[RMDB]
RNA sequence: GGGAACGACUCGAGUAGAGUCGAAAAGAUAUGGAUCCUUAAACUUCGAUAAGCUCUGUGGUCGGAAACGACCACGAGCUUUUGACGAAGUAAGGAUCCUAAGUCAAAACAGGUCUUCGGACCUGAACUCCAAGGAAUGGUUCGCCAUUCCUUGGAGAAAAGAAACAACAACAACAAC
Reactivity to DMS in 0.01 (KOAc 150mM, MgCl2 10mM, bicine 150mM(pH8.5), 24C), signal-to-noise 2, nucleotides 027 to 126: g000a050u000a300u020g000g010a050u010c000c000u010u040a080a130a150c010u010u000c000g000a210u020a020a030g010c000u010c000u020g060u000g000g000u000c000g030g000a050a060a210c000g020a000c000c000a000c000g010a010g000c010u000u000u000u010g020a300c150g010a010a020g000u000a000a030g010g000a000u000c010c000u000a020a090g000u030c050a140a080a090a130c080a000g020g000u010c000u000u020c220g080g000a010c000c000u000g000a040a120
Reactivity to 2A3 in 0.01 (KOAc 150mM, MgCl2 10mM, bicine 150mM(pH8.5), 24C), signal-to-noise 1, nucleotides 027 to 126: g020a000u070a040u130g010g010a020u000c010c010u060u050a290a300a290c000u000u030c020g100a120u040a250a040g000c000u020c300u300g040u010g030g000u010c010g020g060a040a080a090c020g000a010c000c000a000c000g040a010g050c000u000u000u000u000g020a060c000g000a010a000g010u010a000a000g010g000a010u090c000c000u020a040a000g050u000c010a000a020a040a200c020a020g000g040u000c020u110u090c300g230g010a000c000c020u010g010a000a070